[RMDB]
RNA sequence: GGGAACGACUCGAGUAGAGUCGAAAACUCAGUUCCCAGCUCCUGUGGUCAGGAGAGCUUGUCUCAGUGUAGCAGGACAAGCCGCAGACAAAACCCCUCAGACACUGAGUUAAAGAAGGAAGGGCUUUAUUCAGCCGGGAGCUUAGGCAAGACUCAAUCAGUGAAAAUCAUUCGUGAUUUUCACUGAAAAAGAAACAACAACAACAAC
Reactivity to DMS in 0.01 (KOAc 150mM, MgCl2 10mM, bicine 150mM(pH8.5), 24C), signal-to-noise 2, nucleotides 027 to 156: c030u010c010a210g040u000u000c020c000c030a220g040c020u000c000c000u000g030u000g070g000u000c020a110g030g000a090g030a050g000c020u000u000g000u000c000u000c040a120g020u010g000u000a080g030c060a100g010g020a080c040a020a070g000c020c030g010c060a130g000a120c050a090a050a110a120c040c000c020c030u000c040a200g020a080c070a110c020u000g000a040g010u000u000a020a030a090g050a090a100g010g040a110a110g000g020g020c030u010u010u010a080u020u000c050a100g000c000c040g050g000g000a040g030c050u000u010a050g010g010c110a110a140g020a200c020u000c020a010a300
Reactivity to 2A3 in 0.01 (KOAc 150mM, MgCl2 10mM, bicine 150mM(pH8.5), 24C), signal-to-noise 2, nucleotides 027 to 156: c020u050c060a010g010u010u010c000c010c020a000g000c000u020c020c000u050g050u140g100g060u130c020a030g020g020a010g020a000g000c000u030u040g010u080c010u000c110a210g030u040g130u180a040g080c080a030g000g020a000c000a010a010g000c000c010g030c080a100g000a140c020a080a180a130a180c010c010c040c000u050c060a040g030a090c020a010c070u030g000a040g070u020u080a080a080a020g060a050a030g070g030a050a080g020g010g000c000u050u040u040a170u080u080c010a030g000c030c000g000g000g010a000g000c000u010u030a020g000g000c030a060a020g030a020c010u030c070a000a080
This 207-nucleotide RNA was probed chemically with DMS and 2A3.
2A3 adducts were read by reverse transcription with SuperScript II with manganese.
The 2A3 profile rests on 878 reads.
Values are in units of 0.01, from 0 to 300, in steps of 10.
Conditions: 150 mM KOAc, 10 mM MgCl2 and 150 mM bicine (pH 8.5), 24 C.
The DMS profile rests on 2,991 reads.
The data come from the RNA Mapping Database (RMDB), library OK3TST.